The record gives the reactivity of an RNA of 207 nucleotides to DMS and 2A3.
RNA sequence: GGGAACGACUCGAGUAGAGUCGAAAACAAACUCUUCGGAGUUUGCGGAAGCGUACUACUGCUUUUGACGGUGGCUCACUACCCACCGAAUCCCAAAUAGGAUUCGAGGUGAGGACACCGAUAAGCAGUAUCGCGGCUAUUCAGGUUCGCCUGAAAAUCUCUUCAAAAUCUUCGGAUUUUGAAGAGAAAAAGAAACAACAACAACAAC
Reactivity to DMS in 0.01 (KOAc 150mM, MgCl2 10mM, bicine 150mM(pH8.5), 24C), signal-to-noise 1, nucleotides 027 to 156: c010a020a000a020c010u000c000u000u020c260g070g030a000g060u010u000u010g010c040g010g030a160a120g020c010g000u020a140c080u000a040c000u000g020c000u040u010u000u010g040a140c040g000g010u000g010g020c000u000c010a010c020u000a010c020c010c020a300c170c000g000a030a000u000c000c000c030a070a140a300u010a060g000g000a020u000u000c000g000a110g050g000u000g010a110g030g020a070c000a000c090c030g000a020u000a000a050g070c010a020g000u000a020u000c040g040c030g000g000c040u000a090u020u010c030a030g000g010u000u000c220g020c040c000u000g010a040a050a170a210
Reactivity to 2A3 in 0.01 (KOAc 150mM, MgCl2 10mM, bicine 150mM(pH8.5), 24C), signal-to-noise 2, nucleotides 027 to 156: c000a000a010a000c010u000c000u010u090c220g100g000a020g000u000u020u010g030c010g070g140a160a030g000c000g030u060a030c020u000a000c000u020g040c020u010u030u090u130g200a150c030g000g000u020g040g030c000u010c000a010c030u050a050c040c120c020a030c020c010g020a000a000u010c020c010c010a070a220a070u190a100g000g000a000u000u000c000g030a000g000g000u000g010a000g010g030a100c000a000c000c000g010a020u000a000a000g000c040a030g000u010a020u160c010g000c000g020g030c010u100a040u190u040c000a020g060g090u000u090c160g090c060c010u140g000a030a010a080a040

The data come from the RNA Mapping Database (RMDB), library RNAMAK. The reactions ran in a buffer of 150 mM KOAc, 10 mM MgCl2 and 150 mM bicine (pH 8.5), at 24 C.